[RMDB]
RNA sequence: GGGAACGACUCGAGUAGAGUCGAAAAAUGCUGUAAUUCGUUACAGCAUAAUGAACUCAGAAGUGAAACGCCGUAGCGCGGAUGGUAGUGUGGGGUCUCCCCGAAGGUCACUUUUCGAAGUGACCAAUUUAGUACCGCAAUUCGUUGCGGUACUAAAAAAAGAAACAACAACAACAAC
Reactivity to DMS in 0.01 (KOAc 150mM, MgCl2 10mM, bicine 150mM(pH8.5), 24C), signal-to-noise 3, nucleotides 027 to 126: a050u000g000c010u000g020u000a000a020u000u010c160g000u000u000a010c010a010g000c000a010u010a020a080u000g010a120a090c030u000c000a090g000a150a120g000u020g020a100a090a120c070g010c020c070g020u010a090g020c100g000c050g010g000a070u000g000g010u010a070g020u000g020u000g030g000g000g000u000c060u000c020c000c010c130g020a050a060g000g010u000c000a000c000u000u000u010u010c190g010a030a010g030u000g010a000c000c000a000a000
Reactivity to 2A3 in 0.01 (KOAc 150mM, MgCl2 10mM, bicine 150mM(pH8.5), 24C), signal-to-noise 1, nucleotides 027 to 126: a020u000g000c010u000g000u010a050a010u030u020c090g030u030u020a000c000a000g040c010a000u010a000a020u000g020a030a000c000u000c050a100g060a220a070g160u030g090a040a090a050c050g040c040c010g150u110a050g010c050g010c080g140g050a070u100g110g050u070a090g040u050g040u120g010g010g020g010u010c030u010c000c000c000c050g050a130a050g000g040u010c000a000c060u030u010u000u130c250g120a000a000g010u010g010a010c010c000a000a000
About this RNA:
Chemical mapping of a 177-nucleotide RNA with DMS and 2A3. High DMS reactivity at an A or C suggests that its Watson-Crick edge is free. The RNA was probed in 150 mM KOAc, 10 mM MgCl2 and 150 mM bicine (pH 8.5) at 24 C. The data come from the RNA Mapping Database (RMDB), library M2PK50. The 2A3 profile rests on 922 reads.